Structure probing data (DMS and 2A3) for a 177-nucleotide construct. It was measured as part of the RMDB library OK2TRN. DMS adducts were read by reverse transcription with MarathonRT. 2A3 adducts were read by reverse transcription with SuperScript II with manganese. The RNA was probed in 150 mM KOAc, 10 mM MgCl2 and 150 mM bicine (pH 8.5) at 24 C.

[RMDB]
RNA sequence: GGGAACGACUCGAGUAGAGUCGAAAACGCGACGCUGCCGAUCGCCGAACUCGCGCAGCGGGUGAAUCUGUCGCAGACGCCGUGCUGGAAGCGGAUUCAGCGGCUCAAGGAAACGGGGGCGAUCCGAACGCACCUAAUGAUUCGUCAUUAGGUGCGUAAAAGAAACAACAACAACAAC
Reactivity to DMS in 0.01 (KOAc 150mM, MgCl2 10mM, bicine 150mM(pH8.5), 24C), signal-to-noise 4, nucleotides 027 to 126: c080g010c060g010a070c010g020c010u000g000c030c060g010a070u000c060g040c010c040g020a110a090c140u000c030g030c110g030c060a030g010c000g000g000g020u010g010a070a100u000c030u000g020u000c140g020c020a040g020a060c060g000c130c110g010u010g000c010u000g000g000a150a150g000c020g010g000a070u020u000c020a110g010c030g000g000c050u000c060a080a170g010g000a060a060a130c070g020g010g010g000g000c050g000a110u000c020c050g010a160
Reactivity to 2A3 in 0.01 (KOAc 150mM, MgCl2 10mM, bicine 150mM(pH8.5), 24C), signal-to-noise 2, nucleotides 027 to 126: c030g030c060g050a040c000g010c020u060g090c000c040g040a050u050c030g030c030c030g040a080a060c000u030c030g040c000g000c020a020g000c000g000g000g000u030g030a060a050u020c030u040g150u150c050g010c180a000g010a030c060g080c110c060g140u200g030c030u050g020g110a200a020g020c010g000g000a010u020u020c000a010g020c000g040g000c030u050c100a060a190g110g020a110a090a020c040g000g000g000g010g000c010g030a120u000c010c010g040a050